[RMDB]
RNA sequence: GGGAACGACUCGAGUAGAGUCGAAAACAGAUUGAGUUCGCUCAAUCUGAAAUAAAAGCUCACCAAAAGUCCAAUACCAGAGCAAGGACAGAAAAUAAAUAAAAACCAUGGUCUUCGGACCAUGGAAGCAUAUUCUAUACUUCGGUAUAGAAUAUGCAAAAGAAACAACAACAACAAC
Reactivity to 2A3 in 0.01 (KOAc 150mM, MgCl2 10mM, bicine 150mM(pH8.5), 24C), signal-to-noise 3, nucleotides 027 to 126: c010a000g000a000u000u000g010a000g040u050u110c200g050c100u000c000a000a000u000c000u000g000a030a030a000u040a010a130a010a020g030c010u040c030a140c100c060a110a060a060a080g010u000c010c010a040a050u070a240c000c050a070g010a000g040c030a030a080g000g000a010c050a030g120a030a120a020a020u220a060a080a040u130a070a110a030a010a010c000c000a000u000g020g000u000c000u020u050c260g100g000a000c000c000a000u000g000g000a000a000
Reactivity to DMS in 0.01 (KOAc 150mM, MgCl2 10mM, bicine 150mM(pH8.5), 24C), signal-to-noise 2, nucleotides 027 to 126: c000a000g000a010u000u000g000a010g000u010u010c250g050c010u000c000a010a000u000c000u000g000a050a070a100u000a080a160a140a110g000c020u030c050a090c180c080a000a120a050a170g020u000c000c030a050a070u010a100c120c090a110g040a010g010c020a070a200g000g000a060c020a140g000a060a050a070a070u000a040a040a090u000a040a080a180a140a120c000c000a030u000g010g010u000c000u000u010c260g030g000a010c000c000a000u000g000g000a040a040